[RMDB]
RNA sequence: GGGAACGACUCGAGUAGAGUCGAAAAGAUAUGGAAUGUCCGUCCCUCUGAUGACCUCGGAAACGAGCAAGGAGUGACGGAGCAUUCCUAAGUCAAAUCAGUAGCUUACUUCGGUAAGCUACUGAAAGAUUAUGUCUGACUUCGGUCAGACAUAAUCAAAAGAAACAACAACAACAAC
Reactivity to 2A3 in 0.01 (KOAc 150mM, MgCl2 10mM, bicine 150mM(pH8.5), 24C), signal-to-noise 3, nucleotides 027 to 126: g010a020u060a040u130g000g000a020a000u000g010u000c000c000g000u010c050c070c000u000c020u040g270a300u180g060a110c030c000u000c010g030g040a100a080a060c010g020a020g000c020a080a160g000g000a000g000u020g000a000c000g000g020a010g000c000a000u000u000c000c000u000a110a000g050u030c050a000a020a230u050c000a000g010u000a000g020c010u000u020a000c010u030u070c270g090g000u000a000a000g000c000u000a000c000u000g000a000a000a000
Reactivity to DMS in 0.01 (KOAc 150mM, MgCl2 10mM, bicine 150mM(pH8.5), 24C), signal-to-noise 4, nucleotides 027 to 126: g000a040u000a300u010g000g010a010a010u000g010u000c010c000g000u010c000c090c000u000c000u000g010a090u010g000a080c300c000u000c000g010g000a110a130a150c010g010a010g000c020a060a140g000g010a030g010u000g010a010c010g000g000a030g010c000a000u010u010c000c000u010a020a080g000u000c030a060a130a210u000c000a010g000u000a010g000c000u000u000a010c000u000u010c180g000g000u000a000a010g000c000u010a000c000u000g000a000a050a090